[RMDB]
RNA sequence: GGGAACGACUCGAGUAGAGUCGAAAAGGGGUCUAAAGGUAGACGAGAUAGCUGAGCUUGGAUUUAUGGAGCUGAAGCCUCCACGGCUCCAUUGUCAGCUCCGAAACGUCUAUAAUCUUUAGACGGAGGCACCCAAAGAGUCUUGUUCGCAAGACUCCUAAGCUAAGUUGUUCGCAACUUAGCUUAGAAAAGAAACAACAACAACAAC
Reactivity to 2A3 in 0.01 (KOAc 150mM, MgCl2 10mM, bicine 150mM(pH8.5), 24C), signal-to-noise 5, nucleotides 027 to 156: g080g010g000g000u000c000u000a000a020a010g030g000u020a020g010a010c030g020a030g070a260u250a050g100c120u100g010a000g000c020u110u210g190g010a090u240u250u130a030u100g010g000a000g000c000u020g010a110a010g010c010c010u000c010c000a020c000g000g000c000u000c010c000a000u000u010g040u030c040a010g000c000u000c020c010g100a190a110a020c020g000u000c000u000a020u040a090a140u060c010u000u000u000a000g000a010c000g000g000a000g000g000c010a040c000c010c000a030a170a000g010a000g000u000c000u010u040g020u100u140c240g030c110a000a000g000a000c000u000c000
Reactivity to DMS in 0.01 (KOAc 150mM, MgCl2 10mM, bicine 150mM(pH8.5), 24C), signal-to-noise 3, nucleotides 027 to 156: g000g020g020g030u010c000u000a000a020a030g020g020u000a010g000a030c020g010a200g020a200u010a080g040c050u010g040a070g020c100u010u000g030g020a120u000u010u000a020u010g040g010a010g020c010u020g000a040a100g010c060c010u000c010c010a300c050g010g000c010u000c010c010a050u000u000g010u000c040a030g010c010u000c020c040g020a060a070a120c020g010u000c020u000a080u000a130a080u000c030u000u010u000a010g010a020c010g040g040a050g080g040c030a130c000c010c010a060a130a130g000a050g020u000c000u000u000g030u000u010c300g060c010a020a050g000a020c000u000c020